[RMDB]
RNA sequence: GGGAACGACUCGAGUAGAGUCGAAAAUUAGUCGCUCUCAUGGACGCACUGUUGAGAUGGGUAAAUCCAGCACUGCAACAGCUGUAAUAACAACAAAGUAGUUCAACUACUUAGCGUAACGAGACAGCUGACUCACACGUUUCGACGUGUGAGUCAGAAAAGAAACAACAACAACAAC
Reactivity to DMS in 0.01 (KOAc 150mM, MgCl2 10mM, bicine 150mM(pH8.5), 24C), signal-to-noise 2, nucleotides 027 to 126: u000u000a060g000u000c100g050c090u020c020u000c000a200u000g020g000a010c060g010c030a150c040u000g000u000u000g000a020g000a040u000g010g000g000u000a060a130a220u020c020c000a030g020c130a070c070u000g000c000a060a020c040a010g080c050u000g010u000a140a100u020a110a090c210a110a120c070a060a010a020g000u000a020g000u000u040c300a120a020c000u000a000c000u000u000a070g010c050g020u000a090a090c120g000a120g010a010c030a060g040
Reactivity to 2A3 in 0.01 (KOAc 150mM, MgCl2 10mM, bicine 150mM(pH8.5), 24C), signal-to-noise 1, nucleotides 027 to 126: u120u050a020g050u020c030g020c050u020c020u000c020a040u080g100g020a010c020g030c000a010c000u000g010u030u030g030a050g010a040u030g040g000g070u110a060a070a100u060c000c010a000g050c100a030c060u170g010c010a000a030c010a030g020c040u020g030u000a130a060u090a150a010c040a000a000c010a000a010a090g010u010a000g010u060u190c100a180a050c040u010a010c000u010u000a000g000c010g010u020a020a030c050g000a010g040a060c020a010g030